[RMDB]
RNA sequence: GGGAACGACUCGAGUAGAGUCGAAAACAGCGACAAUCAGGUGCGCUGGAUCGACACGUGGGACGUGAACGUCGGGCACGGCUCUGACGGCCGGCGCGGCGGCGUCACGCUGCGCAUGUACCUGGGCUAGCAUCGUUGACUUCGGUCAACGAUGCUAAAAAGAAACAACAACAACAAC
Reactivity to DMS in 0.01 (KOAc 150mM, MgCl2 10mM, bicine 150mM(pH8.5), 24C), signal-to-noise 1, nucleotides 027 to 126: c070a040g000c030g010a060c030a180a100u000c070a120g020g040u000g000c000g000c020u040g000g000a100u020c060g000a130c040a050c060g000u000g010g000g000a090c010g010u000g020a080a050c010g010u000c020g040g010g000c010a120c000g000g000c020u010c130u020g000a160c210g000g000c010c010g010g000c070g090c010g000g000c000g020g000c090g000u000c030a030c010g000c000u010g010c040g020c070a040u020g050u010a050c020c000u020g000g020g010c180
Reactivity to 2A3 in 0.01 (KOAc 150mM, MgCl2 10mM, bicine 150mM(pH8.5), 24C), signal-to-noise 2, nucleotides 027 to 126: c010a010g060c000g010a020c040a060a250u150c030a050g020g110u090g040c000g000c040u050g010g030a130u110c010g080a060c020a000c080g000u050g010g000g060a010c000g000u040g100a220a010c000g000u010c000g030g070g010c170a160c290g010g000c000u100c100u300g250a140c110g010g000c000c000g000g000c110g030c000g070g060c020g000g000c010g040u010c000a000c000g030c020u010g000c020g010c010a040u090g000u050a020c010c000u000g000g060g000c010